[RMDB]
RNA sequence: GGGAACGACUCGAGUAGAGUCGAAAAGCGGAGCCGCUGACCUGAUGGACGCCGACAGCCUCCUGCUGUCUCUGGAGCUGGCGUCCGGCAGUGGGCAGGGCCUCAGCCCGGACCGUCGGGCCUCGCUGCUCACGUCUCUUAUGCUGGUUAAGCGCGAUCCCUGCAUGGUAUUCGUACCAUGCAGGGAAAAAGAAACAACAACAACAAC
Reactivity to 2A3 in 0.01 (KOAc 150mM, MgCl2 10mM, bicine 150mM(pH8.5), 24C), signal-to-noise 1, nucleotides 027 to 156: g060c030g050g020a030g030c040c010g060c000u010g010a020c000c000u050g020a040u160g000g000a000c000g000c010c020g080a110c050a020g000c000c050u050c030c010u070g020c040u080g030u160c100u000c070u150g060g010a020g000c030u000g080g000c000g000u040c000c000g000g040c020a090g010u060g000g000g000c000a000g000g040g000c060c060u140c090a040g010c000c040c030g070g020a230c100c030g170u270c000g040g000g000c000c000u050c020g230c010u000g000c000u000c000a050c000g030u000c000u010c020u210u130a110u180g080c070u020g000g030u000u040a070a000g000c040g000c010g050a050